[RMDB]
RNA sequence: GGGAACGACUCGAGUAGAGUCGAAAAACCUCUAAGUUCGCUUAGAGGUAAUGAACGCUGCAAAAAGCAGCGCGCUCAGCGGAGCACGCAAAAGCAACGCAUGAACACCAUUCUUCGGAAUGGUGAACCUCGAUCUCUAAUUCGUUAGAGAUCGAGGAAAAGAAACAACAACAACAAC
Reactivity to 2A3 in 0.01 (KOAc 150mM, MgCl2 10mM, bicine 150mM(pH8.5), 24C), signal-to-noise 2, nucleotides 027 to 126: a000c000c000u000c010u010a010a020g000u060u110c140g030c150u000u000a000g000a020g000g010u020a000a030u060g010a070a020c010g000c000u000g000c000a130a080a060a080a250g000c010a020g030c000g010c020g010c000u050c020a010g040c050g060g020a050g010c040a010c100g090c050a080a070a030a020g010c010a020a020c010g000c030a100u140g080a050a030c010a000c000c000a000u000u020c010u020u080c230g060g000a010a000u000g000g000u000g010a000a000
Reactivity to DMS in 0.01 (KOAc 150mM, MgCl2 10mM, bicine 150mM(pH8.5), 24C), signal-to-noise 2, nucleotides 027 to 126: a040c000c000u000c000u000a020a000g020u000u000c230g010c000u000u010a010g000a010g000g020u010a010a060u000g010a050a100c000g010c010u010g030c030a040a090a090a090a200g010c000a050g000c000g010c120g000c040u000c060a120g020c060g000g000a250g000c020a040c110g020c180a070a020a130a100g020c030a070a200c030g020c040a050u000g000a170a160c010a020c000c000a020u000u000c000u010u010c170g000g000a020a030u000g030g050u000g010a040a040
An RNA of 177 nucleotides, treated with 2A3 and DMS and read out base by base. Values are in units of 0.01, from 0 to 300, in steps of 10. For DMS, 1,327 sequencing reads were counted. For DMS the reverse transcriptase was MarathonRT. Source: RMDB library M2PK50, as collected in RNAgym.